[RMDB]
RNA sequence: GGGAACGACUCGAGUAGAGUCGAAAAUGAUGAGUACUCGAGCACAGUACGAUCGCGCAGCGCACUGAUCCGAUCGUACUGAGUACAUGAUCUGCGCUGCGCUGCGCAGGCGCAGGAUCGCGCUGCGGCAACAAUGUCUGUUCGCAGACAUUGUUGCAAAAGAAACAACAACAACAAC
Reactivity to 2A3 in 0.01 (KOAc 150mM, MgCl2 10mM, bicine 150mM(pH8.5), 24C), signal-to-noise 2, nucleotides 027 to 126: u190g010a000u020g000a020g160u030a010c000u000c020g000a030g040c020a020c020a070g010u010a000c000g010a030u010c020g000c000g000c010a000g000c000g000c030a070c180u160g020a040u050c050c070g000a020u030c020g000u000a010c000u000g000a000g020u050a020c050a100u130g030a050u040c010u050g010c020g020c020u020g040c050g010c050u040g050c040g000c050a030g100g000c030g000c020a000g090g070a080u090c020g000c000g010c030u030g000c010g050
Reactivity to DMS in 0.01 (KOAc 150mM, MgCl2 10mM, bicine 150mM(pH8.5), 24C), signal-to-noise 3, nucleotides 027 to 126: u010g000a020u000g010a210g020u000a000c010u000c010g020a030g010c100a300c090a030g000u000a010c010g010a000u000c000g020c100g020c000a010g010c010g010c060a140c290u030g000a070u000c050c080g000a040u000c010g010u000a000c010u000g000a070g010u000a050c080a100u020g000a050u010c020u000g000c020g000c010u000g010c010g040c040u000g000c070g020c050a090g020g000c020g030c020a060g020g000a040u000c060g000c050g010c020u010g000c070g020